[RMDB]
RNA sequence: GGGAACGACUCGAGUAGAGUCGAAAAGAUAUGGAGAUACACGGCUGAUGACCUUACAUGUCAAGAACUACGUCGGAAACGACGUAGUUCUUGACAUGUAAGCAAGGCCUGUGUGAUCUCCUAAGUCCUAUAGGCAGAGGUUCGCCUCUGCCUAUAGAAAAGAAACAACAACAACAAC
Reactivity to DMS in 0.01 (KOAc 150mM, MgCl2 10mM, bicine 150mM(pH8.5), 24C), signal-to-noise 1, nucleotides 027 to 126: g000a120u000a230u000g000g000a020g000a020u000a030c000a010c000g020g010c000u000g000a070u020g000a040c300c000u010u000a010c000a020u030g030u000c000a000a030g000a030a030c010u000a000c020g060u010c010g000g000a130a100a260c000g020a020c010g020u000a000g020u000u000c000u000u010g000a000c000a000u000g000u000a000a000g010c000a050a050g000g020c000c010u010g030u000g000u000g000a010u010c010u000c000c000u000a030a110g010u010c060